[RMDB]
RNA sequence: GGGAACGACUCGAGUAGAGUCGAAAACCGUAGGGCUCUUGUCAGGAUUGUGAAACAGGCGUUGAAAUAAGCUUCGAAAGAGGCUUAUGGAGCCUGCCAGCGAUCCUUGGAUUUAGAGCCCUAAACGGAAAUCUCUUGGCGUUCGCGCCAAGAGAAAGAACAUACAAUUGUUCGCAAUUGUAUGUUCAAAAGAAACAACAACAACAAC
Reactivity to DMS in 0.01 (KOAc 150mM, MgCl2 10mM, bicine 150mM(pH8.5), 24C), signal-to-noise 1, nucleotides 027 to 156: c010c010g040u010a020g000g000g040c000u010c000u010u010g020u000c000a100g000g030a020u000u020g030u010g000a180a140a030c020a030g000g020c010g010u010u030g010a240a100a060u000a030a010g040c000u000u000c000g010a120a090a300g010a030g010g000c000u000u000a030u000g000g010a300g050c010c000u000g020c010c020a300g030c060g000a010u000c010c010u000u010g010g000a070u000u010u000a050g000a030g000c020c000c010u000a000a010a060c000g010g030a110a070a110u000c010u000c000u010u010g020g030c000g030u010u010c300g020c060g030c020c020a030a000g010a020g010a000a020a120
Reactivity to 2A3 in 0.01 (KOAc 150mM, MgCl2 10mM, bicine 150mM(pH8.5), 24C), signal-to-noise 2, nucleotides 027 to 156: c000c000g000u020a020g010g000g000c000u010c010u030u010g000u010c000a000g000g010a000u010u040g020u010g040a130a100a020c010a000g010g000c030g230u270u030g000a010a000a000u000a000a010g000c010u000u000c010g030a060a040a050g000a000g000g010c000u000u000a000u000g000g000a000g000c000c010u000g000c000c000a010g020c010g000a000u040c000c000u000u080g010g000a010u240u090u210a010g030a000g010c000c000c010u000a000a010a000c010g010g030a030a090a150u000c000u000c000u000u010g020g000c010g050u060u060c260g040c020g000c080c000a000a000g010a000g000a000a000a000